RNA sequence: GGGAACGACUCGAGUAGAGUCGAAAAAAAGUAUCACAACAUCGAACUACUAAAAUCAUACUUCAGACCAGCACACAUGUACGUUGGAGAUUGCAAUACAAUCUUCCAAGUAGCCAGCGAAGGUAUUGCGUGGUGCGAUACGCCUAGUAAUGUUACAGUCAGUCAUCAUAUUCGUAUGAUGACUGACAAAAGAAACAACAACAACAAC
Reactivity to DMS in 0.01 (KOAc 150mM, MgCl2 10mM, bicine 150mM(pH8.5), 24C), signal-to-noise 1, nucleotides 027 to 156: a040a040a050g040u000a060u000c050a130c030a080a050c020a080u000c080g000a070a110c040u000a230c060u010a100a030a050a050u020c050a170u000a060c090u000u010c000a220g030a120c000c000a140g020c040a110c000a070c050a140u020g020u000a010c090g010u020u000g030g010a060g000a010u000u010g040c020a100a130u010a300c000a040a010u000c080u010u020c000c020a050a030g020u010a050g050c000c070a080g010c080g000a130a040g010g030u000a050u000u020g010c050g080u000g020g040u000g000c000g000a050u000a070c000g020c000c010u020a120g010u000a000a210u000g010u000u020a090c110a160
Reactivity to 2A3 in 0.01 (KOAc 150mM, MgCl2 10mM, bicine 150mM(pH8.5), 24C), signal-to-noise 5, nucleotides 027 to 156: a000a020a010g110u100a070u050c050a020c030a170a050c030a130u120c070g050a070a050c050u140a020c050u110a170a040a110a110u100c050a060u060a110c040u050u050c030a080g030a130c010c020a030g010c030a010c000a010c010a080u130g110u200a040c050g130u010u010g000g000a000g000a010u000u040g060c160a100a020u080a300c000a000a010u010c000u150u060c030c000a020a030g030u030a030g060c040c040a020g020c080g050a080a040g060g010u070a080u060u050g040c050g010u060g020g010u040g000c000g030a030u020a070c060g020c000c000u050a060g040u110a100a130u110g050u070u060a030c020a000

Structure probing data (DMS and 2A3) for a 207-nucleotide construct.
The data come from the RNA Mapping Database (RMDB), library OK3TST.
Reactivities are rounded to 0.1 and cut off at 0 and 3.
2A3 adducts were read by reverse transcription with SuperScript II with manganese.
Conditions: 150 mM KOAc, 10 mM MgCl2 and 150 mM bicine (pH 8.5), 24 C.